Notes: Source: RMDB library OK2TRN, as collected in RNAgym. This 177-nucleotide RNA was probed chemically with 2A3 and DMS. The RNA was probed in 150 mM KOAc, 10 mM MgCl2 and 150 mM bicine (pH 8.5) at 24 C.
[RMDB]
RNA sequence: GGGAACGACUCGAGUAGAGUCGAAAAGAUCGCGCGAUCGGCCGGUACGCGGCCCGUACACGUACCGUCUGCGCCGAUCUGAUCUAUCUGCGGCCUCUGGCCGAUGAGGCGCGUGUCGAUCACAUGGCAUGUUUAGAGCUUUCGAGCUCUAAACAUGAAAAGAAACAACAACAACAAC
Reactivity to 2A3 in 0.01 (KOAc 150mM, MgCl2 10mM, bicine 150mM(pH8.5), 24C), signal-to-noise 5, nucleotides 027 to 126: g010a010u010c000g000c000g000c010g150a090u090c020g040g000c010c010g000g010u010a000c010g040c030g030g050c000c100c030g100u170a030c050a000c010g000u000a010c010c010g030u020c050u060g020c010g010c030c010g000a000u000c010u000g000a010u000c010u020a080u010c050u090g040c010g090g140c010c020u060c050u130g120g010c040c040g040a060u120g020a010g000g020c070g000c020g100u040g040u030c040g020a060u060c020a030c030a200u180g110g000
Reactivity to DMS in 0.01 (KOAc 150mM, MgCl2 10mM, bicine 150mM(pH8.5), 24C), signal-to-noise 7, nucleotides 027 to 126: g010a010u000c010g010c210g020c010g000a090u010c030g010g020c050c000g010g000u000a000c000g030c030g010g000c050c140c180g010u010a070c020a030c010g000u000a010c000c000g010u000c050u000g010c030g010c010c020g000a010u000c000u000g010a150u000c040u010a140u010c050u000g010c010g010g010c000c000u000c050u000g010g020c090c070g000a030u000g000a050g010g010c010g000c020g020u000g010u000c120g010a070u000c060a080c120a120u010g010g020